Structure probing data (2A3 and DMS) for a 177-nucleotide construct. Conditions: 150 mM KOAc, 10 mM MgCl2 and 150 mM bicine (pH 8.5), 24 C. Source: RMDB libraries RFM100 and RFMREP, as collected in RNAgym.

RNA sequence: GGGAACGACUCGAGUAGAGUCGAAAACUUCGGCGGAGGCGGUCUUAAACCGAAUGCGAAACGCGAUUUCAGGGUCGAAAUCGGUAUUUUUGCUGGCGGGAUGCUGGCCAUUCUAACGCCGACGAGCCAACCCGUUUUUAUUCGUAAAAACGGGUUGAAAAGAAACAACAACAACAAC
Reactivity to 2A3 in 0.01 (KOAc 150mM, MgCl2 10mM, bicine 150mM(pH8.5), 24C), signal-to-noise 9, nucleotides 027 to 126: c000u010u010c000g000g000c000g000g020a020g010g030c050g010g000u030c030u070u170a110a060a020c000c010g020a050a030u110g000c000g000a000a010a020c200g000c000g070a010u010u010u020c060a090g300g110g180u230c110g030a000a000a000u000c000g020g010u120a220u020u050u000u030u100g020c020u060g070g080c020g010g040g010a070u120g060c070u050g060g010c010c010a040u180u120c030u060a150a050c000g000c010c000g000a010c030g020a010g050c010
Reactivity to DMS in 0.01 (KOAc 150mM, MgCl2 10mM, bicine 150mM(pH8.5), 24C), signal-to-noise 6, nucleotides 027 to 126: c030u010u000c000g020g010c010g000g000a170g000g020c300g010g020u020c010u020u020a070a120a160c010c000g000a080a090u010g000c030g000a020a010a030c300g000c000g000a010u000u000u000c010a210g010g030g010u050c140g000a010a010a010u010c000g020g010u030a020u000u000u010u000u000g010c000u010g010g030c070g010g000g000a090u010g010c190u010g000g010c010c020a040u010u030c030u000a050a290c010g000c000c000g000a010c180g000a140g010c140